[RMDB]
RNA sequence: GGGAACGACUCGAGUAGAGUCGAAAAGUGAAAAUUAACGUUCAUGAUGUUCUAGGCCCAGAUAGCCGUAGCGGUGCACACGCAGCUAUUCAGCACGACCAUGCUAAGAGUGUUGGGUACGAAUCUAGCCAGCAUGGCGAUUCGUCGCCAUGCUGGCAAAAGAAACAACAACAACAAC
Reactivity to DMS in 0.01 (KOAc 150mM, MgCl2 10mM, bicine 150mM(pH8.5), 24C), signal-to-noise 1, nucleotides 027 to 126: g000u010g000a050a010a040a060u000u050a140a120c210g000u000u000c050a040u000g000a140u000g000u010u000c060u000a160g000g000c000c000c010a070g000a060u000a140g000c030c030g040u000a070g000c130g010g000u010g030c040a040c160a120c010g030c000a090g000c090u010a040u000u000c030a030g010c000a060c010g000a080c220c160a180u000g010c070u000a060a070g010a180g030u000g000u000u010g000g000g000u000a060c080g010a090a080u000c050u010a160

The record gives the reactivity of an RNA of 177 nucleotides to DMS. The RNA was probed in 150 mM KOAc, 10 mM MgCl2 and 150 mM bicine (pH 8.5) at 24 C. Source: RMDB library OK2TST, as collected in RNAgym.